Record summary:
The record gives the reactivity of an RNA of 177 nucleotides to DMS and 2A3.

RNA sequence: GGGAACGACUCGAGUAGAGUCGAAAACAGCGUGCGUGAACCCCGCACCGAGGGCGGGGUCCGGGUCGGGUACGCACCGACCCUGGCCGAAUCUUUGGAUCAGGUAUUUGGGCCCGGCACCGGUCGGCCCAGUGGAUCUUUUCGAAGAUCCACUGGGAAAAGAAACAACAACAACAAC
Reactivity to DMS in 0.01 (KOAc 150mM, MgCl2 10mM, bicine 150mM(pH8.5), 24C), signal-to-noise 2, nucleotides 027 to 126: c100a060g000c110g020u000g030c030g040u010g020a050a050c000c000c000c000g000c010a070c080c210g020a140g000g010g000c000g010g010g000g000u000c010c040g000g000g000u000c010g000g000g040u020a040c150g000c100a090c010c010g000a150c100c010c000u020g000g000c000c000g010a150a130u060c090u010u020u040g000g020a060u030c040a070g010g000u000a120u000u010u010g010g020g000c010c010c030g000g000c010a060c010c040g000g000u050c060g000g000
Reactivity to 2A3 in 0.01 (KOAc 150mM, MgCl2 10mM, bicine 150mM(pH8.5), 24C), signal-to-noise 6, nucleotides 027 to 126: c040a000g070c040g090u080g020c030g010u050g070a060a080c000c010c020c010g010c040a200c030c050g100a200g050g120g000c030g010g010g000g000u000c000c000g010g000g000u000c000g010g000g020u060a040c070g000c030a010c010c010g030a050c000c000c000u010g010g000c000c000g090a130a160u110c120u110u170u190g130g030a180u070c010a040g040g030u090a210u090u180u220g080g020g010c000c010c000g030g000c070a150c070c000g030g020u050c010g050g000
It was measured as part of the RMDB library OK1LIB. For DMS the reverse transcriptase was MarathonRT. For DMS, 5,284 sequencing reads were counted.